This 207-nucleotide RNA was probed chemically with 2A3 and DMS. For DMS, 2,537 sequencing reads were counted. Source: RMDB library OK3TST, as collected in RNAgym.

RNA sequence: GGGAACGACUCGAGUAGAGUCGAAAAAAGAUUGGCUUUUCAAAAGGUCUUAUAACAGAAUAUCUUGGUGUCCACUCAACAGUCAAGAUUUGCGAGAUGCAAUCCUCAACCAUACUAGUGUGCUCUAGGAUCAACAAGACAGAUAUUUGGAGAUGCAGCGUUCAUGUAAAUUCGUUUACAUGAACGCAAAAGAAACAACAACAACAAC
Reactivity to 2A3 in 0.01 (KOAc 150mM, MgCl2 10mM, bicine 150mM(pH8.5), 24C), signal-to-noise 4, nucleotides 027 to 156: a000a000g110a060u060u040g030g000c030u040u040u080u110c040a050a100a080a060g060g000u020c030u060u120a220u070a280a070c080a050g150a170a060u070a030u100c020u030u030g000g010u030g020u040c030c010a020c030u090c050a030a120c010a070g130u100c030a050a080g010a020u030u090u120g050c040g010a070g030a150u130g040c030a040a030u050c000c010u060c060a030a090c010c020a070u040a120c000u030a050g040u010g020u020g110c010u020c000u040a010g020g000a070u080c010a020a100c010a040a010g030a000c010a000g030a020u020a040u050u020u020g030g000a030g010a020u060g020c020a000
Reactivity to DMS in 0.01 (KOAc 150mM, MgCl2 10mM, bicine 150mM(pH8.5), 24C), signal-to-noise 1, nucleotides 027 to 156: a040a010g000a170u000u010g060g030c010u010u000u000u000c040a130a080a130a130g030g000u000c020u010u000a090u000a150a150c090a160g000a060a110u000a060u010c010u000u000g000g010u000g020u030c010c030a090c120u010c080a060a040c040a090g020u000c020a010a070g010a070u000u000u000g040c010g030a170g000a160u000g000c000a010a090u010c010c030u020c080a090a080c050c030a050u000a050c080u000a060g000u000g010u000g000c040u000c020u000a120g020g010a070u010c010a020a040c010a010a100g010a040c040a030g030a060u000a060u000u000u000g000g010a040g000a040u010g030c060a200